[RMDB]
RNA sequence: GGGAACGACUCGAGUAGAGUCGAAAACUUAUAAGAUCGUCUGUGUGGACAACUGUGAUAACUACUCAAUACAGACAUGCUUUGUCGAGAGAGACCUGAUGCUGACAUUGAGUCGACUUAUCGGAACCAUUUACUCCAGUUUCGACUGGAGUAAAUGAAAAGAAACAACAACAACAAC
Reactivity to 2A3 in 0.01 (KOAc 150mM, MgCl2 10mM, bicine 150mM(pH8.5), 24C), signal-to-noise 9, nucleotides 027 to 126: c030u110u070a080u090a270a100g080a160u090c060g040u000c050u030g140u040g050u150g110g020a020c040a100a050c130u100g080u110g150a050u050a110a020c020u050a020c000u020c020a020a030u040a070c020a010g140a110c010a040u080g150c050u110u140u150g020u060c070g010a050g010a020g010a000g010a260c000c020u020g010a030u030g020c020u020g020a090c010a050u030u020g010a010g010u020c010g030a100c060u040u050a030u060c010g030g020a020a040c030
Reactivity to DMS in 0.01 (KOAc 150mM, MgCl2 10mM, bicine 150mM(pH8.5), 24C), signal-to-noise 7, nucleotides 027 to 126: c030u010u020a070u040a090a060g000a090u030c090g010u010c010u000g000u010g020u010g000g010a060c120a090a090c160u030g000u020g000a080u020a050a050c020u010a060c040u000c010a020a020u000a070c040a020g000a070c020a040u000g010c060u010u000u010g010u000c020g000a170g010a120g020a170g000a030c050c100u020g010a010u010g000c030u000g010a080c060a040u000u010g000a040g010u000c040g000a070c120u010u010a020u010c030g010g000a100a100c180